[RMDB]
RNA sequence: GGGAACGACUCGAGUAGAGUCGAAAAGGAUCCCCGGGGAAACAAACUCGAGCGAGGCGGAGAUCGAGCCCCAGUUCGUGCGCGGCGACCUGAAGUUGCUUCGGCUACUUCUUGAUCUCGUCCUGCGUGGAACGGCUCCUUCUUCACACCAGCCGGACAGAAUGGUAAGGUUCGCCUUACCAUUCUGAAAAGAAACAACAACAACAAC
Reactivity to DMS in 0.01 (KOAc 150mM, MgCl2 10mM, bicine 150mM(pH8.5), 24C), signal-to-noise 1, nucleotides 027 to 156: g000g040a200u000c020c000c010c000g040g110g040g020a180a060a090c070a120a140a220c030u040c060g000a130g000c020g020a030g040g010c050g010g000a140g020a030u000c050g000a060g050c030c070c120c100a100g000u000u020c060g060u030g000c050g000c090g040g020c020g000a090c100c000u000g030a040a110g040u000u000g000c030u010u010c260g030g030c030u000a050c010u000u000c000u000u000g000a020u000c030u000c040g040u000c030c020u020g080c010g000u010g000g000a060a050c040g000g010c010u000c010c030u020u000c030u000u040c010a090c040a020c000c000a300g060c000c010g040g020a300
Reactivity to 2A3 in 0.01 (KOAc 150mM, MgCl2 10mM, bicine 150mM(pH8.5), 24C), signal-to-noise 3, nucleotides 027 to 156: g130g030a180u050c010c010c000c010g010g000g010g020a100a120a070c130a080a100a070c170u120c080g050a110g050c000g010a020g020g020c010g010g000a010g010a010u000c000g000a000g000c030c010c000c010a010g000u010u020c080g110u120g090c000g000c000g000g020c000g000a000c000c000u000g000a010a000g000u010u030g000c000u030u080c260g120g000c010u030a000c000u030u020c000u000u080g160a290u140c000u020c080g100u150c020c100u170g000c000g010u030g030g010a000a010c010g000g000c000u010c000c010u010u020c000u000u010c000a010c000a000c010c000a000g000c010c020g010g020a000
Structure probing data (DMS and 2A3) for a 207-nucleotide construct. The RNA was probed in 150 mM KOAc, 10 mM MgCl2 and 150 mM bicine (pH 8.5) at 24 C. DMS adducts were read by reverse transcription with MarathonRT. The 2A3 profile rests on 2,551 reads. For DMS, 1,690 sequencing reads were counted.